[RMDB]
RNA sequence: GGGAACGACUCGAGUAGAGUCGAAAAGAAGGGUGAAAGCCCUUGAUACUGUAGUGGAAAUUAUAAAUAAGAAGAGUUCUGAGUUGCUUAAGCAGAACUAAUAUAAAAAGACAAGCAUUAUUACAAACAUGGCGAGGUAAGUUCGCUUACCUCGCAACUAACGACUUUUCUUCGGAAAAGUCGUUAGAAAAGAAACAACAACAACAAC
Reactivity to 2A3 in 0.01 (KOAc 150mM, MgCl2 10mM, bicine 150mM(pH8.5), 24C), signal-to-noise 1, nucleotides 027 to 156: g020a000a000g010g000g010u040g030a070a020a000g000c000c000c000u000u030g030a050u060a060c090u160g120u160a100g010u030g000g040a060a030a030u110u050a080u120a190a020a050u090a060a050g060a070a060g000a020g080u030u000c000u000g070a090g050u110u130g140c030u200u130a150a030g040c000a000g010a000a000c000u010a110a050u120a000u050a030a080a000a000a000g030a030c070a050a000g000c000a020u030u090a010u060u120a070c060a080a060a000c050a100u050g100g000c000g000a010g000g000u000a000a000g040u010u070c150g000c080u020u000a000c000c010u000c000g000c000a010a000